About this RNA: The record gives the reactivity of an RNA of 177 nucleotides to DMS and 2A3. The RNA was probed in 150 mM KOAc, 10 mM MgCl2 and 150 mM bicine (pH 8.5) at 24 C. Values cover nucleotides 27 to 126.
RNA sequence: GGGAACGACUCGAGUAGAGUCGAAAAGCCACCAGCCCUGCUCUCUGCAGUGUUCUAUUGUGGAUUGCUUGUGUGCUGGCAGGCUACUACUGGUAAGAAUGGCUAGUGUCAGCAGGGAUGGCUCCUCAACAGAUACGGUCUUCGGACCGUAUCUGUUAAAAGAAACAACAACAACAAC
Reactivity to DMS in 0.01 (KOAc 150mM, MgCl2 10mM, bicine 150mM(pH8.5), 24C), signal-to-noise 2, nucleotides 027 to 126: g020c020c050a300c040c040a190g000c020c000c000u000g000c010u000c030u000c000u020g020c010a000g000u000g010u010u000c060u000a040u000u000g010u010g000g000a040u000u000g000c000u020u000g020u010g010u030g010c160u000g000g010c120a060g020g010c000u010a010c060u000a060c100u000g020g030u010a090a020g000a080a150u010g020g000c010u030a070g000u000g020u000c070a040g010c000a080g000g000g010a110u000g030g010c080u000c010c020u010c070
Reactivity to 2A3 in 0.01 (KOAc 150mM, MgCl2 10mM, bicine 150mM(pH8.5), 24C), signal-to-noise 3, nucleotides 027 to 126: g040c020c010a030c000c000a010g050c000c000c000u020g000c000u000c000u000c010u000g030c040a010g010u010g060u170u100c060u110a030u030u020g000u010g000g050a140u010u020g010c010u080u040g020u000g050u070g130c040u020g030g010c020a100g000g080c000u010a010c000u010a000c020u060g140g000u130a080a080g080a100a070u110g060g000c010u020a020g080u010g030u070c020a010g010c020a010g050g010g040a090u060g010g000c010u000c000c010u070c040